RNA sequence: GGGAACGACUCGAGUAGAGUCGAAAACGAAAUACAGUGAGUGGACGGAAGAAAUCCCCUUCCCACCUCCCCACUGUCCACUCACUGUCUUCCUAAGAGGAAAUAUAAAUCGGGGGUGGGAAGGGGAGGUGCAGCACGAUUUCGAUCGUGCUGCACCAAAAGAAACAACAACAACAAC
Reactivity to 2A3 in 0.01 (KOAc 150mM, MgCl2 10mM, bicine 150mM(pH8.5), 24C), signal-to-noise 1, nucleotides 027 to 126: c080g070a100a000a000u260a110c000a010g000u000g040a000g010u000g010g000a000c000g000g030a030a000g210a090a190a130u110c000c010c030c060u000u000c020c000c030a000c000c000u090c000c000c000c000a070c090u030g000u000c000c000a090c060u000c030a000c000u000g000u000c000u000u000c000c000u030a060a000g160a070g180g120a000a040a000u300a080u120a070a140a000u200c000g000g000g030g000g000u000g000g000g020a000a000g000g000g000g000a000